[RMDB]
RNA sequence: GGGAACGACUCGAGUAGAGUCGAAAAGAAGGGUGAUAGCCCUUGAUACUGUAGUGGAAAUUAUAAAUAAGAAGAGUUCUGAGUUGCUUAAGCAGAACUAAAAUAAAAAGACAAGCAUUAUUACAAACAUGGCGAGGUAAGUUCGCUUACCUCGCAAACUCGAAAUGUUAUUCGUAACAUUUCGAGUAAAAGAAACAACAACAACAAC
Reactivity to 2A3 in 0.01 (KOAc 150mM, MgCl2 10mM, bicine 150mM(pH8.5), 24C), signal-to-noise 3, nucleotides 027 to 156: g050a000a000g010g020g010u050g060a190u170a070g000c000c010c000u000u010g030a030u040a110c050u070g040u120a030g010u060g020g090a040a030a040u110u080a130u280a200a140a040u090a060a050g050a050a010g010a010g080u000u000c010u010g030a030g020u100u080g060c030u070u060a050a030g000c000a000g000a010a010c020u040a040a010a000a020u080a000a090a000a010a000g050a000c020a010a020g000c000a000u010u080a020u120u150a190c100a060a110a010c030a100u100g100g010c000g000a000g000g000u000a010a000g010u050u050c050g010c050u000u020a000c000c000u010c000g000c000a000a000
Reactivity to DMS in 0.01 (KOAc 150mM, MgCl2 10mM, bicine 150mM(pH8.5), 24C), signal-to-noise 1, nucleotides 027 to 156: g000a080a060g010g040g020u020g020a170u000a090g000c000c010c000u010u010g000a150u000a100c060u030g030u000a060g030u010g010g000a050a050a120u000u000a020u000a100a070a090u000a060a180g000a190a190g010a060g010u010u000c030u010g000a120g000u010u000g010c040u000u030a120a150g020c050a060g000a040a060c000u020a010a060a010a040u000a050a040a110a100a220g000a100c030a050a100g010c020a000u000u000a060u000u000a100c090a040a060a100c010a080u020g020g000c020g030a010g000g030u010a000a080g020u000u000c300g020c000u000u000a010c000c000u000c010g030c000a000a010